[RMDB]
RNA sequence: GGGAACGACUCGAGUAGAGUCGAAAAGGUGUGGUGGUAUUGCGAAUGGCAAGCACAUGCCAAGUUUACAAAAAGUUGAAAAUGUUGAAAUGAUCGCAUUUUGUGACGUAGACAUUUCGAAAGCAGCCAAUACGCAUAUAUUCGUAUAUGCGUAUUGAAAAGAAACAACAACAACAAC
Reactivity to DMS in 0.01 (KOAc 150mM, MgCl2 10mM, bicine 150mM(pH8.5), 24C), signal-to-noise 9, nucleotides 027 to 126: g000g030u010g010u000g000g020u020g020g020u010a060u010u000g010c020g010a130a110u030g020g020c020a040a060g010c070a050c120a040u000g000c010c010a070a100g020u010u020u030a070c110a050a060a060a080a120g000u010u010g000a040a030a040a130u010g000u000u010g000a050a080a060u030g010a150u000c040g000c020a080u010u020u020u020g020u020g010a040c060g000u010a110g000a030c020a060u010u000u010c050g010a040a060a100g000c140a090g010c140
Reactivity to 2A3 in 0.01 (KOAc 150mM, MgCl2 10mM, bicine 150mM(pH8.5), 24C), signal-to-noise 9, nucleotides 027 to 126: g040g000u050g010u030g060g300u100g050g070u230a270u130u100g030c030g130a210a120u110g100g000c000a020a010g040c010a010c000a030u020g020c010c000a010a020g040u040u080u050a040c070a020a110a020a030a050g020u030u030g070a060a050a050a080u050g030u050u070g050a100a090a110u140g050a220u050c020g000c050a030u060u050u090u160g140u070g020a030c030g000u010a020g020a040c020a030u030u040u020c040g030a070a060a010g050c040a000g040c020

Source: RMDB library OK1LIB, as collected in RNAgym. An RNA of 177 nucleotides, treated with DMS and 2A3 and read out base by base. The reactions ran in a buffer of 150 mM KOAc, 10 mM MgCl2 and 150 mM bicine (pH 8.5), at 24 C. For 2A3, 13,295 sequencing reads were counted.